[RMDB]
Record summary: Chemical mapping of a 177-nucleotide RNA with 2A3 and DMS. Values cover nucleotides 27 to 126. 2A3 adducts were read by reverse transcription with SuperScript II with manganese. For 2A3, 5,616 sequencing reads were counted.
RNA sequence: GGGAACGACUCGAGUAGAGUCGAAAACUAAGGGUCUUCGGACCCUUAGAAAUUACGGUCGGCUCAUGACGCUAGUCGAUCAUGCUGCUCGACCUAGACUAAAAAGGCUCAGGUUCGCCUGAGCCAACUCAGAAGUAAAGUUCGCUUUACUUCUGAGAAAAGAAACAACAACAACAAC
Reactivity to 2A3 in 0.01 (KOAc 150mM, MgCl2 10mM, bicine 150mM(pH8.5), 24C), signal-to-noise 3, nucleotides 027 to 126: c000u000a000a010g020g000g010u010c000u030u060c150g040g020a000c030c000c000u000u010a000g000a010a010a000u200u110a030c030g010g010u000c000g000g000c000u000c010a000u010g000a000c000g020c040u060a060g100u280c010g100a200u010c010a000u000g070c070u010g030c070u110c150g000a000c010c000u000a010g020a020c050u060a050a000a050a070a050g000g000c000u010c010a010g010g040u040u070c180g040c020c000u000g000a000g000c000c000a000a000
Reactivity to DMS in 0.01 (KOAc 150mM, MgCl2 10mM, bicine 150mM(pH8.5), 24C), signal-to-noise 6, nucleotides 027 to 126: c000u000a000a000g000g010g010u000c000u000u010c200g030g000a020c000c000c000u000u000a000g000a050a090a060u010u010a060c210g010g000u000c000g010g010c010u000c000a000u000g000a020c020g000c040u020a100g020u010c000g000a150u000c000a000u000g000c170u000g000c020u020c010g010a010c000c000u000a040g000a160c120u010a030a050a070a120a100g010g010c000u000c000a010g000g000u000u010c230g010c010c000u000g000a000g000c000c000a010a010

Source information
It was measured as part of the RMDB library M2PK50.